RNA sequence: GGGAACGACUCGAGUAGAGUCGAAAAGCCGUAAACGCAUCCGGCGAAUAAGAUGCAUGAGCGAAAGCUCUAAGAUAAUUGGCCGUUUCGUAGGGGCCGUAGAGCCUACUUAUUAAUGCUCGAGAGGUGUGGAGCGAUCAUCACGCAAGACUAACAACGCAUUACUAGGAUUCGUCCUAGUAAUGCGAAAAGAAACAACAACAACAAC
Reactivity to DMS in 0.01 (KOAc 150mM, MgCl2 10mM, bicine 150mM(pH8.5), 24C), signal-to-noise 1, nucleotides 027 to 156: g040c000c000g030u000a080a300a120c050g010c000a080u010c040c030g040g000c000g070a150a120u010a090a010g010a090u000g040c010a150u000g040a040g010c040g000a160a060a240g000c010u080c000u010a030a150g010a130u000a060a110u000u030g000g010c000c030g000u000u000u010c020g020u000a110g040g010g000g020c000c010g020u000a090g010a080g020c000c030u010a060c090u000u000a160u000u000a010a160u010g010c010u000c020g000a180g000a040g040g000u000g000u000g020g020a080g000c050g030a070u000c040a140u000c050a070c070g010c030a060a130g000a300c030u000a080a070c050a110a180
Reactivity to 2A3 in 0.01 (KOAc 150mM, MgCl2 10mM, bicine 150mM(pH8.5), 24C), signal-to-noise 3, nucleotides 027 to 156: g000c010c010g000u040a150a130a020c060g020c030a020u040c030c020g040g020c040g020a050a070u210a100a030g050a010u050g000c060a080u110g040a010g010c030g030a030a040a000g010c010u020c020u010a140a040g070a170u080a080a110u070u060g020g000c000c030g080u050u100u090c040g020u040a040g020g000g000g010c000c000g000u020a020g020a010g030c010c030u070a070c020u130u050a030u100u150a160a080u170g000c000u010c060g000a040g000a000g040g040u070g020u030g050g000a010g030c030g030a020u050c010a000u030c020a070c050g040c050a070a000g040a080c060u100a100a020c040a050a010
Conditions: 150 mM KOAc, 10 mM MgCl2 and 150 mM bicine (pH 8.5), 24 C. Structure probing data (DMS and 2A3) for a 207-nucleotide construct. High DMS reactivity at an A or C suggests that its Watson-Crick edge is free. For 2A3, 1,437 sequencing reads were counted.